[RMDB]
RNA sequence: GGGAACGACUCGAGUAGAGUCGAAAAGCUCGAACCCUGUUUGAGUUCACCACCGACGUGAAGGUAACGGAGUCACCGAUCCUUUUCCGUGACGAAGGUAUGCGCACCGCCUGCUCUCCUGAUGGCCUGUGCAGUGAUGGCCGCGGCCUUGAGCUGAGUCAUGGACACAGUUCGCUGUGUCCAUGACAAAAGAAACAACAACAACAAC
Reactivity to 2A3 in 0.01 (KOAc 150mM, MgCl2 10mM, bicine 150mM(pH8.5), 24C), signal-to-noise 1, nucleotides 027 to 156: g060c050u000c010g000a060a040c070c040c140u150g040u000u060u170g070a030g010u120u120c060a030c090c010a040c030c030g160a070c000g050u070g030a000a020g100g010u030a010a110c040g040g020a020g100u070c030a030c060c090g020a160u180c000c070u070u070u000u010c030c000g090u030g090a090c110g070a050a030g000g000u010a130u060g060c060g050c050a030c080c030g000c000c020u060g030c010u020c020u030c000c050u150g120a110u180g050g000c070c020u180g000u060g020c030a010g030u050g150a140u150g010g000c000c000g030c060g030g000c000c020u080u090g010a020g000c020u000g000a000
This 207-nucleotide RNA was probed chemically with 2A3. Reactivities are rounded to 0.1 and cut off at 0 and 3. For 2A3, 549 sequencing reads were counted. Conditions: 150 mM KOAc, 10 mM MgCl2 and 150 mM bicine (pH 8.5), 24 C.